[RMDB]
The record gives the reactivity of an RNA of 207 nucleotides to 2A3 and DMS. Reactivities are rounded to 0.1 and cut off at 0 and 3. Source: RMDB library OK3TST, as collected in RNAgym. For DMS, 6,212 sequencing reads were counted. The 2A3 profile rests on 595 reads. The reactions ran in a buffer of 150 mM KOAc, 10 mM MgCl2 and 150 mM bicine (pH 8.5), at 24 C. 2A3 adducts were read by reverse transcription with SuperScript II with manganese. Reactivities are given for positions 27 through 156.
RNA sequence: GGGAACGACUCGAGUAGAGUCGAAAAACGACAUCCAGUCGGCCGUUCAGGCUGUCUUUCAUCACGUUCGAGUUAAUCAUCAGCACCGGAACGUCGCCGCGUGCAAUGGCCUUCUUGUCUUUCUGGUUGGAGUCCGGGAGCGCCACGCGGGUACGCGUAAGGGUCUAAGAUUCGUCUUAGACCCUUAAAAAGAAACAACAACAACAAC
Reactivity to 2A3 in 0.01 (KOAc 150mM, MgCl2 10mM, bicine 150mM(pH8.5), 24C), signal-to-noise 1, nucleotides 027 to 156: a000c030g050a030c020a100u080c050c000a070g040u030c020g000g040c040c000g050u140u280c100a050g000g000c000u010g030u040c000u030u130u120c110a120u060c050a020c050g140u040u170c090g010a020g090u120u160a130a020u110c060a010u050c030a020g070c000a050c050c000g070g020a070a000c030g040u000c030g030c020c010g000c000g020u040g110c100a060a080u070g020g000c000c020u010u020c010u030u080g010u030c000u040u120u000c040u140g200g000u090u060g040g030a000g000u000c010c000g020g040g000a010g000c160g000c000c000a000c010g010c020g020g070g070u110a020c040g000c000g000
Reactivity to DMS in 0.01 (KOAc 150mM, MgCl2 10mM, bicine 150mM(pH8.5), 24C), signal-to-noise 2, nucleotides 027 to 156: a100c040g030a070c020a120u000c020c030a120g030u010c040g040g020c030c010g040u000u020c070a140g000g020c020u010g010u000c020u000u010u010c050a090u020c090a080c090g020u000u010c020g010a100g010u000u000a070a100u010c090a150u010c090a150g000c080a100c010c020g030g000a050a040c020g030u000c030g020c050c010g020c030g000u010g030c070a080a050u000g020g030c020c000u000u000c020u000u010g020u010c030u000u000u010c050u010g030g040u030u000g010g020a110g030u000c020c030g020g000g000a050g020c090g020c030c020a040c010g050c050g000g030g000u010a020c040g030c040g020